Record summary: The data come from the RNA Mapping Database (RMDB), library M2PK90. Chemical mapping of a 177-nucleotide RNA with DMS and 2A3. The reactions ran in a buffer of 150 mM KOAc, 10 mM MgCl2 and 150 mM bicine (pH 8.5), at 24 C. For 2A3, 1,852 sequencing reads were counted.

[RMDB]
RNA sequence: GGGAACGACUCGAGUAGAGUCGAAAAUCAAAUAAUUCCACCGACUGCCCAUUGUGGGUAACCAGUUGCUCUGAUGAUGGCCCAAGUGGGAGUAAAGAGAAGAAGCCAGAUAGGAUCAACAAAAAAAGUAAUGUAACUUCUUCGGAAGUUACAUUACAAAAGAAACAACAACAACAAC
Reactivity to DMS in 0.01 (KOAc 150mM, MgCl2 10mM, bicine 150mM(pH8.5), 24C), signal-to-noise 2, nucleotides 027 to 126: u000c090a060a080a080u020a090a140u030u000c030c030a090c100c050g000a030c060u000g000c000c010c000a090u000u000g020u010g000g030g020u000a070a050c070c020a030g000u000u010g030c130u000c000u000g000a030u000g000a100u020g000g000c000c000c010a020a040g020u000g000g010g000a040g000u000a020a060a220g000a050g000a080a090g010a060a100g000c050c010a030g020a100u000a080g000g000a150u000c100a040a070c080a030a000a060a110a050a030a130
Reactivity to 2A3 in 0.01 (KOAc 150mM, MgCl2 10mM, bicine 150mM(pH8.5), 24C), signal-to-noise 2, nucleotides 027 to 126: u110c000a040a020a050u100a050a110u120u000c020c030a050c000c060g090a040c030u170g060c020c000c000a040u050u170g080u100g100g000g010u000a000a090c020c010a000g000u080u060g120c060u030c030u170g060a060u020g020a020u040g060g010c000c010c000a020a020g020u010g000g030g000a000g000u030a010a120a000g090a000g000a080a020g020a020a000g040c010c020a030g010a110u030a090g040g020a020u090c010a000a080c000a050a150a000a000a000a000a000